[RMDB]
RNA sequence: GGGAACGACUCGAGUAGAGUCGAAAAACAGAUCUUGAUGUUACAGCAAGGUCAGGAAAAUAUUUUGACAAAAACAUACUAGUUUCAUCCUUAGUAGUUGAUUCUAUGAAUGCUGUACUUGAAAAUACCCGAUGAUAAUCUUCGGAUUAUCAUCGGGAAAAGAAACAACAACAACAAC
Reactivity to DMS in 0.01 (KOAc 150mM, MgCl2 10mM, bicine 150mM(pH8.5), 24C), signal-to-noise 1, nucleotides 027 to 126: a030c180a080g000a160u000c060u040u000g000a010u060g040u060u050a070c010a010g000c000a070a030g000g030u000c000a000g000g000a020a050a070a080u040a070u000u000u010u000g000a070c060a010a010a020a100a160c130a190u000a030c140u000a010g000u010u030u000c010a030u000c040c000u030u000a110g030u040a060g050u000u020g000a100u030u040c010u010a060u000g010a180a060u020g000c020u000g000u010a060c000u000u000g000a080a100a030a060u000a080
Reactivity to 2A3 in 0.01 (KOAc 150mM, MgCl2 10mM, bicine 150mM(pH8.5), 24C), signal-to-noise 2, nucleotides 027 to 126: a000c010a010g070a150u080c020u050u090g050a070u080g000u140u030a000c000a020g000c000a030a030g120g000u000c000a000g090g060a050a000a190a000u300a160u000u130u010u040g000a010c040a020a160a000a010a000c020a020u250a000c070u020a000g020u000u000u080c040a060u060c060c010u100u180a050g100u090a010g000u090u020g000a060u050u000c020u080a050u110g080a110a020u050g010c000u010g000u020a020c010u060u110g140a040a060a000a010u130a040